[RMDB]
RNA sequence: GGGAACGACUCGAGUAGAGUCGAAAAAACGAAGCUCAGGUGCGUGCCGAGCUGCGGGUCGCGUGCCCAUCGAAACGGCGGCGGCAGCGCCACCAUAAGCCGCGUCGGGACGGCGCUCCCACCGCCAUACUCCAGCAUAGUUCGCUAUGCUGGAGUAAAAAGAAACAACAACAACAAC
Reactivity to DMS in 0.01 (KOAc 150mM, MgCl2 10mM, bicine 150mM(pH8.5), 24C), signal-to-noise 3, nucleotides 027 to 126: a070a050c080g000a090a070g040c030u000c030a050g040g020u000g020c160g000u010g020c010c020g020a060g010c010u000g030c020g020g000g000u000c010g020c120g010u010g000c000c010c030a110u010c150g010a100a090a120c190g010g010c000g040g020c070g010g040c190a020g020c050g000c010c010a050c030c010a110u000a150a100g010c040c030g000c090g020u000c130g010g010g000a070c160g020g010c010g000c000u010c230c020c010a060c010c010g000c000c020a060
Reactivity to 2A3 in 0.01 (KOAc 150mM, MgCl2 10mM, bicine 150mM(pH8.5), 24C), signal-to-noise 1, nucleotides 027 to 126: a040a000c040g030a070a010g010c010u020c070a080g080g000u090g120c090g180u250g040c030c000g010a030g000c020u030g000c030g020g010g030u090c020g000c020g090u140g030c000c000c030a080u130c100g050a080a100a040c100g000g010c000g000g000c010g000g000c000a000g010c010g030c000c000a030c010c000a060u050a190a060g080c060c030g080c080g080u110c090g050g010g040a080c100g000g000c000g000c000u010c010c000c000a000c000c000g020c000c000a000